[RMDB]
RNA sequence: GGGAACGACUCGAGUAGAGUCGAAAACGGCGCAACAUUAAUGAAAGACGCACCAAAACAGGAAGUGAAAACCAGCAAUGGUGUGGUGGAGAAAGAUUACACGCUGGCAGAGUCGAUGCGUAAACCGUCGUGAUGGAGCUUUCGAGCUCCAUCACGAAAAAGAAACAACAACAACAAC
Reactivity to 2A3 in 0.01 (KOAc 150mM, MgCl2 10mM, bicine 150mM(pH8.5), 24C), signal-to-noise 1, nucleotides 027 to 126: c000g030g000c000g100c050a020a110c030a130u220u220a260a150u110g050a080a010a000g140a000c020g000c030a000c000c020a050a090a000a110c020a020g070g120a080a020g090u040g140a010a060a000a000c000c000a010g020c040a020a090u140g000g100u050g050u010g010g090u090g000g020a100g110a090a070a010g040a000u000u080a020c020a000c100g000c030u070g000g000c020a000g070a010g130u080c060g000a040u080g030c020g040u030a030a050a050c050c010g000
Reactivity to DMS in 0.01 (KOAc 150mM, MgCl2 10mM, bicine 150mM(pH8.5), 24C), signal-to-noise 1, nucleotides 027 to 126: c130g010g010c010g020c060a070a120c010a110u050u010a090a120u000g040a060a140a160g000a080c140g010c030a060c000c000a020a060a070a060c190a070g000g000a060a070g020u000g000a080a010a100a110c040c040a030g020c060a050a060u000g000g030u000g000u000g000g030u000g060g000a080g000a090a100a010g000a070u000u000a040c140a010c100g030c000u020g000g000c010a100g040a060g050u010c040g030a060u000g030c100g000u000a040a040a140c030c030g020